[RMDB]
RNA sequence: GGGAACGACUCGAGUAGAGUCGAAAAACAGCGAAAGGCACAAGACUUCGAACAUUAUAGCAGUUAGUCGUUGCCUAAACCCAUUGCAAUAUAUGGGACAGUAGAGGUCGCAAGCCUAUACUGUGCGAAAAGUCGCAAGGUUUCGACCUUGCGACAACGUACGCUGUUCGUUCGCGAACAGCGUACGAAAAGAAACAACAACAACAAC
Reactivity to 2A3 in 0.01 (KOAc 150mM, MgCl2 10mM, bicine 150mM(pH8.5), 24C), signal-to-noise 1, nucleotides 027 to 156: a000c070a000g000c020g050a090a120a010g040g000c010a000c000a050a100g040a060c040u070u160c210g100a180a000c060a090u250u290a150u290a080g060c110a020g070u120u060a060g010u060c010g080u040u050g000c000c000u000a080a000a040c000c000c000a000u000u010g010c060a040a000u010a000u000a000u100g020g000g000a010c000a010g000u000a010g000a000g000g000u140c040g090c290a010a020g000c000c000u000a000u000a000c010u000g010u030g000c020g040a030a000a000a090g010u000c000g000c000a020a020g010g030u040u030u290c240g040a020c050c000u000u000g010c000g000a000c000a000a000